This 177-nucleotide RNA was probed chemically with DMS and 2A3. The RNA was probed in 150 mM KOAc, 10 mM MgCl2 and 150 mM bicine (pH 8.5) at 24 C. 2A3 adducts were read by reverse transcription with SuperScript II with manganese. For DMS, 992 sequencing reads were counted. As a SHAPE reagent, 2A3 marks flexible, mostly unpaired nucleotides at the ribose 2'-OH. Reactivities are given for positions 27 through 126.

[RMDB]
RNA sequence: GGGAACGACUCGAGUAGAGUCGAAAAAGCGAGGCUAAGCGCAACCGGCACGCUGCAGAGCUGGAGACAAUUCGCGUCAGCCGCCAGCAGGCCGAGGCGCAGUUGGCCGCCGCAGAGGCCAAGCUCACACUGUUCACAGCUUCGGCUGUGAACAGUGAAAAGAAACAACAACAACAAC
Reactivity to DMS in 0.01 (KOAc 150mM, MgCl2 10mM, bicine 150mM(pH8.5), 24C), signal-to-noise 2, nucleotides 027 to 126: a060g000c000g020a300g010g010c010u000a080a120g000c010g000c000a070a090c210c030g010g030c000a060c040g000c000u000g000c060a200g010a170g010c000u000g030g010a200g000a070c130a090a250u000u020c170g000c080g000u010c030a020g010c010c000g010c160c060a000g020c020a060g020g010c000c000g000a060g000g020c000g010c050a050g000u010u000g000g010c030c000g000c150c020g000c080a020g010a140g000g000c000c040a080a100g000c000u020c030a230
Reactivity to 2A3 in 0.01 (KOAc 150mM, MgCl2 10mM, bicine 150mM(pH8.5), 24C), signal-to-noise 1, nucleotides 027 to 126: a000g050c040g000a020g030g000c000u060a030a010g010c010g010c030a110a170c110c020g050g090c060a040c100g040c000u000g060c020a030g050a060g010c040u060g030g030a070g060a050c090a090a300u300u160c120g080c060g120u080c000a000g020c000c050g060c120c000a000g050c030a020g030g000c000c000g000a000g030g080c000g000c000a010g000u120u140g030g010c020c000g010c010c040g000c030a010g020a040g140g040c010c000a040a040g020c020u000c080a030